An RNA of 177 nucleotides, treated with DMS and read out base by base. The data come from the RNA Mapping Database (RMDB), library TTRDES. In probing experiments dimethyl sulfate is read out at A N1 and C N3, which are open when not base-paired. Conditions: 150 mM KOAc, 10 mM MgCl2 and 150 mM bicine (pH 8.5), 24 C.
[RMDB]
RNA sequence: GGGAACGACUCGAGUAGAGUCGAAAAGAUAUGGAGCUCGGGCUGCGAUGAGAGUACAUCGGAAACGAUGUGACUCGAGCAGUCCGAGCUCCUAAGUCAAACUAGGCUACCUUCGGGUAGCCUAGAAGUCCCUAUAAACGUUCGCGUUUAUAGGGACAAAAGAAACAACAACAACAAC
Reactivity to DMS in 0.01 (KOAc 150mM, MgCl2 10mM, bicine 150mM(pH8.5), 24C), signal-to-noise 2, nucleotides 027 to 126: g000a020u000a210u010g000g010a000g020c010u010c000g010g010g020c000u000g040c000g010a240u030g000a130g020a020g030u010a000c000a010u000c000g020g000a070a030a100c010g010a030u010g000u000g010a040c000u000c010g000a080g030c000a010g020u000c000c010g000a000g000c010u010c000c010u000a010a060g000u000c020a100a160a300c010u000a010g000g000c010u000a000c000c000u000u010c270g020g010g010u000a000g020c000c010u000a000g000a030a160